Chemical mapping of a 177-nucleotide RNA with 2A3 and DMS.
Conditions: 150 mM KOAc, 10 mM MgCl2 and 150 mM bicine (pH 8.5), 24 C.
The 2A3 profile rests on 1,548 reads.
For 2A3 the reverse transcriptase was SuperScript II with manganese.
Source: RMDB libraries RFM100 and RFMREP, as collected in RNAgym.
For DMS the reverse transcriptase was MarathonRT.
[RMDB]
RNA sequence: GGGAACGACUCGAGUAGAGUCGAAAACAGCUAUUUCGGUAUACGAGAGAUGCAGAAUAUUUUAUUUGAAUAUCAACGACUUAAAUCAUAGUUGUUUUUUCUGUAGUGGCUAAAUACUUCAUAAUAGAAUGUAAGAAAUUUUCGAAUUUCUUACAUUAAAAGAAACAACAACAACAAC
Reactivity to 2A3 in 0.01 (KOAc 150mM, MgCl2 10mM, bicine 150mM(pH8.5), 24C), signal-to-noise 4, nucleotides 027 to 126: c030a010g040c020u020a050u070u070u110c040g020g050u120a120u070a210c060g010a020g000a000g000a040u080g020c020a000g080a060a010u080a110u070u090u110u060a300u140u190u170g050a030a010u070a040u140c020a060a040c040g080a030c060u060u160a020a090a100u130c090a070u110a150g010u000u000g020u070u040u010u010u020u000c010u020g040u030a070g020u060g080g030c010u020a040a010a040u080a060c010u040u060c010a010u010a140a000u030a070g060
Reactivity to DMS in 0.01 (KOAc 150mM, MgCl2 10mM, bicine 150mM(pH8.5), 24C), signal-to-noise 3, nucleotides 027 to 126: c110a080g010c030u010a050u020u020u010c070g000g020u050a080u040a100c100g000a030g010a050g000a130u010g000c020a040g000a020a030u010a030u010u010u010u020a090u020u030u020g010a060a040u000a030u020c080a030a040c050g000a030c040u000u030a050a070a100u030c170a080u010a040g010u000u000g000u000u000u010u010u010u010c010u000g020u010a050g000u020g010g010c010u020a020a050a080u020a100c010u000u020c020a040u020a050a030u010a110g000